The data come from the RNA Mapping Database (RMDB), library OK3TST. Structure probing data (2A3) for a 207-nucleotide construct. The 2A3 profile rests on 610 reads. For 2A3 the reverse transcriptase was SuperScript II with manganese.
RNA sequence: GGGAACGACUCGAGUAGAGUCGAAAAGUAUGGAUCAAAAGCAAGGAUUCUGCAGUCAGAUUUCUUGAAUUAAUGUCCUACCUUCAACACUUACUAGCAUUAUGUCCUAGGAAAGCUACUUAACCCGUGUGUUAACCCUUUCGUCUACAAAAUGGGAGAAGGUUAAGACGUUCGCGUCUUAACCUUCAAAAGAAACAACAACAACAAC
Reactivity to 2A3 in 0.01 (KOAc 150mM, MgCl2 10mM, bicine 150mM(pH8.5), 24C), signal-to-noise 2, nucleotides 027 to 156: g020u030a030u290g040g020a030u120c040a120a050a030a010g000c000a010a010g000g000a010u020u000c000u040g060c130a190g130u290c020a010g030a010u030u000u060c010u020u000g040a090a080u040u090a090a020u100g010u020c000c000u000a010c010c000u050u160c050a120a100c020a000c080u100u210a020c020u070a010g040c010a110u070u070a110u300g080u070c010c000u010a010g000g020a100a030a000g020c050u130a050c060u130u040a050a010c010c010c050g040u020g040u020g010u040u140a070a080c020c000c000u000u100u150c120g020u000c070u010a130c120a120a270a090a070u170g030g000g020a070